[RMDB]
RNA sequence: GGGAACGACUCGAGUAGAGUCGAAAAGUCGCCGCGUCGACAUCAACGCCCAGCGCGGGCGAGGGAUGCGUCCUACGGGGGUGCCCCAUUCGCCGGCAUGGCAGAGGACGGCAAGAUUGCCGCGACGCCUAUAGCGUACCUUCGGGUACGCUAUAGGAAAAGAAACAACAACAACAAC
Reactivity to 2A3 in 0.01 (KOAc 150mM, MgCl2 10mM, bicine 150mM(pH8.5), 24C), signal-to-noise 6, nucleotides 027 to 126: g010u010c000g000c070c000g000c020g000u020c000g010a060c000a080u050c020a030a100c040g010c010c010c010a050g070c300g030c110g150g000g000c000g000a040g020g070g000a050u160g000c010g030u020c000c010u040a160c160g200g000g000g020g090u080g030c000c000c000c000a120u130u100c020g000c020c000g040g060c060a070u090g020g000c020a020g020a040g110g030a030c010g010g010c000a030a040g110a180u160u300g020c010c010g000c010g000a000c020g010
Reactivity to DMS in 0.01 (KOAc 150mM, MgCl2 10mM, bicine 150mM(pH8.5), 24C), signal-to-noise 6, nucleotides 027 to 126: g010u010c010g040c010c220g020c030g010u010c010g010a220c100a050u000c040a090a140c080g000c030c000c040a140g020c160g010c120g010g000g020c000g000a020g010g000g010a070u010g020c020g010u000c000c010u000a120c160g030g010g010g000g020u010g010c030c020c000c020a150u010u000c050g000c010c020g000g010c060a070u000g000g020c040a110g000a180g000g000a140c010g000g000c080a070a120g010a070u000u000g030c020c140g000c020g000a050c080g010
Notes: The data come from the RNA Mapping Database (RMDB), library OK2TRN. Structure probing data (2A3 and DMS) for a 177-nucleotide construct. High DMS reactivity at an A or C suggests that its Watson-Crick edge is free. For DMS, 6,137 sequencing reads were counted. The RNA was probed in 150 mM KOAc, 10 mM MgCl2 and 150 mM bicine (pH 8.5) at 24 C. High 2A3 reactivity points to a flexible backbone, as in loops and unpaired stretches. The 2A3 profile rests on 9,552 reads.